[RMDB]
RNA sequence: GGGAACGACUCGAGUAGAGUCGAAAACAGGAGAAUAAUUUCCCUUUGCAAGGGCCUUUAAAGUUUAGGUGCUGCGGAUUGCAGUGUGGCCUACCUUGAAAAUUCACUUGCAAGGUCAAGCCUAUUGAACUAUAUGGAAUUUCGAUUCCAUAUAGUUAAAAGAAACAACAACAACAAC
Reactivity to 2A3 in 0.01 (KOAc 150mM, MgCl2 10mM, bicine 150mM(pH8.5), 24C), signal-to-noise 5, nucleotides 027 to 126: c040a030g070g060a100g050a120a150u180a220a140u060u040u110c000c000c040u020u050u010g000c010a010a010g000g020g000c010c010u080u100u100a050a030a020g020u070u150u080a020g000g020u170g040c010u010g000c020g070g220a300u170u260g000c010a000g020u060g050u190g230g020c000c000u000a010c000c000u000u000g040a040a030a030a050u080u050c030a030c070u020u030g000c010a020a000g030g020u070c030a060a040g020c020c010u100a170u070u130g050
Reactivity to DMS in 0.01 (KOAc 150mM, MgCl2 10mM, bicine 150mM(pH8.5), 24C), signal-to-noise 9, nucleotides 027 to 126: c150a080g010g010a100g010a110a120u010a110a150u010u000u000c020c010c000u000u000u000g010c020a020a020g000g010g020c120c060u000u000u000a140a020a020g000u000u000u000a010g010g020u000g000c000u000g010c010g020g010a150u010u010g010c000a010g010u000g020u010g080g010c000c000u000a020c300c000u000u000g000a060a060a020a030u000u000c030a040c020u000u000g000c000a010a010g010g010u010c180a040a080g010c020c020u000a120u000u010g010